[RMDB]
RNA sequence: GGGAACGACUCGAGUAGAGUCGAAAAGAUAUGGAAGUCCUUGCCGAAGAACUGUGGUGUUUGUCGGAAACGAUGAUACCACAGGGAGGCAUGGACUUCCUAAGUCAAAGACGCGUUCGCGCGUCAACUAUAUCUCGUUCUUCGGAACGAGAUAUAGAAAAGAAACAACAACAACAAC
Reactivity to DMS in 0.01 (KOAc 150mM, MgCl2 10mM, bicine 150mM(pH8.5), 24C), signal-to-noise 5, nucleotides 027 to 126: g000a050u010a300u000g020g000a010a010g020u000c000c000u000u000g010c000c000g000a100a150g000a130a160c000u010g010u000g000g000u000g010u000u000u000g050u000c000g010g000a070a070a140c000g020a010u000g010a010u000a000c010c000a000c000a010g000g000g000a040g020g010c000a010u000g000g010a010c000u000u000c000c010u000a010a060g020u010c040a090a120a130g000a010c010g010c010g000u000u010c220g010c030g020c000g010u000c000a040a150
Reactivity to 2A3 in 0.01 (KOAc 150mM, MgCl2 10mM, bicine 150mM(pH8.5), 24C), signal-to-noise 5, nucleotides 027 to 126: g020a010u070a040u140g000g000a020a000g000u000c010c010u010u010g010c000c010g240a300a050g000a060a020c000u010g000u000g020g020u020g060u090u160u290g050u020c010g000g050a050a030a030c020g010a000u050g010a010u030a050c010c000a000c000a000g000g010g010a010g000g000c010a000u000g010g000a000c000u000u000c000c000u000a010a010g000u000c020a030a120a100g020a010c010g020c020g020u040u110c280g000c000g010c000g130u010c000a000a000